The record gives the reactivity of an RNA of 207 nucleotides to DMS. Values are in units of 0.01, from 0 to 300, in steps of 10. Conditions: 150 mM KOAc, 10 mM MgCl2 and 150 mM bicine (pH 8.5), 24 C. For DMS the reverse transcriptase was MarathonRT.
[RMDB]
RNA sequence: GGGAACGACUCGAGUAGAGUCGAAAAGCCCAGAAGCCUCCCCUCAAAAUCGUUUCAGUCCAAAAUUGCUUCGGCGGCCCUGUCAUGAGGCCGAAACGAAGGCACGUACCCCUUCGAAUGGCGUCGGAACUUUCAGUCGUAUUCGUACGACUGAAAAACUUAUCUCCUCUUUCGAGAGGAGAUAAGUAAAAGAAACAACAACAACAAC
Reactivity to DMS in 0.01 (KOAc 150mM, MgCl2 10mM, bicine 150mM(pH8.5), 24C), signal-to-noise 1, nucleotides 027 to 156: g000c010c010c000a120g020a120a170g050c000c000u010c000c000c000c020u000c050a060a040a130a080u000c040g030u000u000u000c070a080g010u000c030c030a060a030a110a110u000u010g000c020u000u000c000g010g040c040g010g000c020c010c050u020g020u000c200a150u000g020a040g010g020c000c000g020a020a070a080c010g000a040a020g000g020c010a060c090g000u010a190c020c020c020c010u000u030c040g000a130a170u010g010g020c040g010u000c010g000g010a050a120c060u000u000u000c000a010g010u000c010g060u000a020u000u000c240g050u000a000c020g000a020c000u000g010a000a010a010a090